The record gives the reactivity of an RNA of 177 nucleotides to DMS and 2A3.
For DMS the reverse transcriptase was MarathonRT.

RNA sequence: GGGAACGACUCGAGUAGAGUCGAAAAGAAACUCGCCAAGUCUGUGGGGGCACAGGGACCCCUGGCGGUCAUCGGAUGGUAUCUUGCUUCCGGUCUGAUCAUCAAAUUCGUCUCCCCGCCUUUCGGCGCACUUGAACAGAUUCGUCUGUUCAAGUGCAAAAGAAACAACAACAACAAC
Reactivity to DMS in 0.01 (KOAc 150mM, MgCl2 10mM, bicine 150mM(pH8.5), 24C), signal-to-noise 3, nucleotides 027 to 126: g010a070a110a100c060u000c040g010c030c020a080a090g010u000c070u000g000u000g020g000g020g000g000c110a070c150a140g010g000g000a150c050c020c050c030u000g010g010c070g000g020u010c050a030u000c040g000g020a040u020g000g020u000a060u010c160u010u000g000c040u000u010c020c010g010g000u000c150u000g000a050u000c040a040u000c040a040a080a150u010u010c070g010u010c050u000c010c010c010c060g010c070c070u000u000u000c050g010g020c160
Reactivity to 2A3 in 0.01 (KOAc 150mM, MgCl2 10mM, bicine 150mM(pH8.5), 24C), signal-to-noise 2, nucleotides 027 to 126: g030a010a060a020c020u000c030g050c010c010a040a030g100u000c090u110g080u130g040g000g020g010g010c070a020c070a170g140g050g090a100c000c010c000c020u000g020g000c000g000g030u020c010a020u060c020g020g010a050u080g050g060u140a070u110c100u070u280g050c020u040u020c000c000g010g010u010c030u050g040a030u040c010a000u020c010a040a020a160u110u060c010g030u010c040u030c010c010c000c020g000c000c020u060u130u070c050g020g000c010
For 2A3 the reverse transcriptase was SuperScript II with manganese. The data come from the RNA Mapping Database (RMDB), library OK2TRN. In probing experiments dimethyl sulfate is read out at A N1 and C N3, which are open when not base-paired. Values cover nucleotides 27 to 126.